[RMDB]
RNA sequence: GGGAACGACUCGAGUAGAGUCGAAAACUUGGGACUCGAUAAUAAGCAAUUCGCGCGAAUCCGCUGUGAAGGUAGUUUCGAUCAAAUCGAAUACUGACGAUGCUGUACGUGCGAGAGCGUCUGCAGCCUUACCACGGCUUUUCGAAGCCGUGGUAAGAAAAGAAACAACAACAACAAC
Reactivity to 2A3 in 0.01 (KOAc 150mM, MgCl2 10mM, bicine 150mM(pH8.5), 24C), signal-to-noise 2, nucleotides 027 to 126: c000u070u080g020g010g030a030c000u010c110g010a020u080a290a030u100a180a020g000c020a030a180u140u030c060g000c020g000c000g130a230a080u040c040c060g000c030u070g110u140g100a050a010g050g000u020a050g050u070u070u000c010g000a040u050c120a090a210a120u040c000g000a000a000u020a090c050u020g050a050c020g090a090u160g010c010u000g020u060a020c000g000u000g030c010g010a020g000a000g040c020g040u000c020u040g000c000a000g010c000
Reactivity to DMS in 0.01 (KOAc 150mM, MgCl2 10mM, bicine 150mM(pH8.5), 24C), signal-to-noise 2, nucleotides 027 to 126: c040u020u020g060g000g020a050c020u000c070g000a100u040a110a120u000a150a130g010c060a090a160u020u010c070g000c000g000c000g000a250a080u000c040c110g000c010u000g010u010g000a060a250g000g030u010a010g020u010u000u000c020g060a010u000c280a040a040a300u000c010g000a010a020u000a010c030u000g010a300c060g000a140u000g000c040u000g000u030a170c040g030u010g010c040g020a060g010a140g030c060g000u000c020u000g000c070a070g030c070